[RMDB]
RNA sequence: GGGAACGACUCGAGUAGAGUCGAAAAUACCGCAGGCCUGCGGUGCGGCAGUGUGGAGACCUGCCGUAAGCCGUGUUGUUUUGACAACCGGGAGAAGGCGUAUGCGGAGGCAGCGCUUUCAGGGUCUAAAAGUAUGGGAUCUUCGGAUCCCAUACAAGUACUCAAUGGACUUCGGUCCAUUGAGUACAAAAGAAACAACAACAACAAC
Reactivity to 2A3 in 0.01 (KOAc 150mM, MgCl2 10mM, bicine 150mM(pH8.5), 24C), signal-to-noise 2, nucleotides 027 to 156: u080a010c000c000g000c000a020g000g000c000c060u040g000c010g010g000u000g000c000g060g000c010a010g000u110g010u120g300g050a050g010a090c020c000u000g000c000c000g000u000a010a010g030c010c020g090u160g040u160u020g000u020u120u100u300g070a020c000a020a000c000c000g000g000g000a020g000a000a010g000g010c020g000u070a300u170g010c040g030g070a040g220g000c000a000g000c010g020c000u020u000u000c000a000g020g000g000u000c000u000a000a050a000a110g000u000a000u000g000g000g000a020u000c000u020u050c220g050g000a000u000c010c000c000a000u000a010c000a000a010
Source information: Chemical mapping of a 207-nucleotide RNA with 2A3. Source: RMDB library M2RFPK, as collected in RNAgym. The reactions ran in a buffer of 150 mM KOAc, 10 mM MgCl2 and 150 mM bicine (pH 8.5), at 24 C.